RNA sequence: GGGAACGACUCGAGUAGAGUCGAAAAAAUUUAUUAGGUGAGGCGCUCUUAAUUACUGGAACAUCAGGGUGUCUGAGUGGUAAAGCCAGAUGAUGUAGUGGAUCAGGACAACUCUAACUUUUUAAGACUAACUCAUCAUUUUCGAAUGAUGAGUUAGAAAAGAAACAACAACAACAAC
Reactivity to DMS in 0.01 (KOAc 150mM, MgCl2 10mM, bicine 150mM(pH8.5), 24C), signal-to-noise 3, nucleotides 027 to 126: a070a050u010u010u000a060u010u010a060g020g010u010g020a060g010g020c130g020c060u000c030u000u000a060a050u010u000a070c050u010g020g020a090a080c070a040u010c060a050g000g010g020u000g000u000c020u010g010a100g020u000g010g010u010a040a080a110g000c030c010a050g010a070u000g010a040u000g010u010a050g010u000g010g020a060u000c040a050g010g010a070c080a040a040c070u000c050u010a100a070c080u020u010u000u000u020a030a140g010a300
Reactivity to 2A3 in 0.01 (KOAc 150mM, MgCl2 10mM, bicine 150mM(pH8.5), 24C), signal-to-noise 1, nucleotides 027 to 126: a000a020u200u170u070a160u080u070a100g070g000u040g040a030g010g070c050g000c020u010c000u010u110a120a090u100u030a110c030u050g020g080a040a000c010a010u110c000a030g050g050g000u020g090u030c030u000g020a010g040u010g000g070u040a010a010a000g090c030c020a040g030a090u120g010a000u070g000u080a040g030u000g030g060a060u040c020a040g000g030a000c030a080a040c070u010c040u080a040a210c010u020u160u030u070u100a110a000g020a060